[RMDB]
RNA sequence: GGGAACGACUCGAGUAGAGUCGAAAAGAAGAGCAGGCAGAUAAUCUUGUGCAGUAUGCAUGCUCAUAUCUCCACACGAAGAAAGGCAGCAAAAGAAUAACUGCCACUGCACAAGUGGAGCCGCAGAAUCCUGCUCACCAUUCGUGGUGAGCAGGAUAAAAGAAACAACAACAACAAC
Reactivity to DMS in 0.01 (KOAc 150mM, MgCl2 10mM, bicine 150mM(pH8.5), 24C), signal-to-noise 1, nucleotides 027 to 126: g000a200a070g000a110g000c000a100g000g000c000a020g000a160u100a040a180u000c060u000u000g000u000g000c000a110g010u000a000u000g080c110a000u000g040c000u000c110a060u000a040u000c040u000c000c160a050c040a200c290g000a050a030g010a050a140a010g040g000c040a000g070c050a090a020a090a130g040a200a060u000a000a110c000u060g000c000c000a160c000u000g000c010a060c000a010a000g020u000g060g000a140g000c080c060g020c240a110g040a120
Reactivity to 2A3 in 0.01 (KOAc 150mM, MgCl2 10mM, bicine 150mM(pH8.5), 24C), signal-to-noise 2, nucleotides 027 to 126: g150a100a000g040a000g000c000a010g000g000c040a050g060a230u080a100a130u110c010u010u000g000u000g000c000a000g010u060a130u130g010c040a010u040g020c000u030c070a000u000a090u080c050u000c080c050a070c040a000c050g130a110a130g080a090a080a000g020g000c000a000g010c040a020a300a000a000g290a070a100u070a110a000c000u000g000c000c030a000c000u000g000c000a000c060a010a010g010u030g020g010a020g030c060c030g000c080a000g140a060

Structure probing data (DMS and 2A3) for a 177-nucleotide construct. The DMS profile rests on 1,017 reads.